[RMDB]
RNA sequence: GGGAACGACUCGAGUAGAGUCGAAAAGAGCAACGACGGCUCACCUUGUAUAUCUGAUACCAAAUGAAUCAAAACACGUCUCAUACAGGCCGGGUCACAGAUGCCGUCCCGCAUCUUGCUCGCCAGAGCCAAAAUACAGUUUCGACUGUAUUUUGGCAAAAGAAACAACAACAACAAC
Reactivity to 2A3 in 0.01 (KOAc 150mM, MgCl2 10mM, bicine 150mM(pH8.5), 24C), signal-to-noise 8, nucleotides 027 to 126: g010a000g000c020a020a110c070g150a010c060g030g010c000u010c020a030c000c010u040u130g090u040a120u010a050u090c090u060g070a040u040a110c040c060a060a080a170u180g080a080a080u130c070a050a080a080a060c060a030c070g060u010c030u020c070a050u100a120c020a020g040g000c070c080g050g000g030u080c040a040c030a110g020a010u030g010c020c020g080u020c000c000c000g010c000a020u010c010u050u050g010c000u010c010g020c010c010a040g040a010
Reactivity to DMS in 0.01 (KOAc 150mM, MgCl2 10mM, bicine 150mM(pH8.5), 24C), signal-to-noise 5, nucleotides 027 to 126: g010a040g020c010a030a080c180g010a140c140g010g010c030u010c030a130c080c030u000u000g020u000a040u000a080u000c070u010g010a070u000a110c120c090a040a080a090u020g020a120a070u010c110a030a070a090a100c100a060c110g010u000c040u000c070a060u010a080c090a050g000g010c150c060g010g000g000u000c060a100c180a050g000a020u000g000c000c070g020u000c020c030c030g000c020a020u000c010u000u000g000c020u000c030g010c070c070a110g000a210
Structure probing data (2A3 and DMS) for a 177-nucleotide construct.
For 2A3, 14,491 sequencing reads were counted.
DMS adducts were read by reverse transcription with MarathonRT.
Values cover nucleotides 27 to 126.